[RMDB]
RNA sequence: GGGAACGACUCGAGUAGAGUCGAAAAGAUAUGGAAAGAAAACACUCUGUUACGUUGAAACACGGCUUUAAAGUCGGAAACGACUUUAAAGCCGUGUGGAGUAACAGGAGUUAAGCUUUCCUAAGUCCAUUCCGUUAGAGUUCGCUCUAACGGAAUGAAAAGAAACAACAACAACAAC
Reactivity to DMS in 0.01 (KOAc 150mM, MgCl2 10mM, bicine 150mM(pH8.5), 24C), signal-to-noise 1, nucleotides 027 to 126: g010a100u010a300u010g000g000a020a000a020g000a080a020a070a110c190a050c050u000c010u000g010u010u000a010c010g040u010u010g000a240a160a060c000a010c000g010g000c010u000u000u000a000a020a010g000u000c000g000g010a080a090a210c000g010a010c000u000u000u010a010a000a000g030c010c000g000u000g020u020g010g000a050g020u000a000a010c000a030g010g010a080g010u000u000a170a190g010c000u010u000u010c000c000u000a060a260g010u010c060
This 177-nucleotide RNA was probed chemically with DMS. Values cover nucleotides 27 to 126. The RNA was probed in 150 mM KOAc, 10 mM MgCl2 and 150 mM bicine (pH 8.5) at 24 C.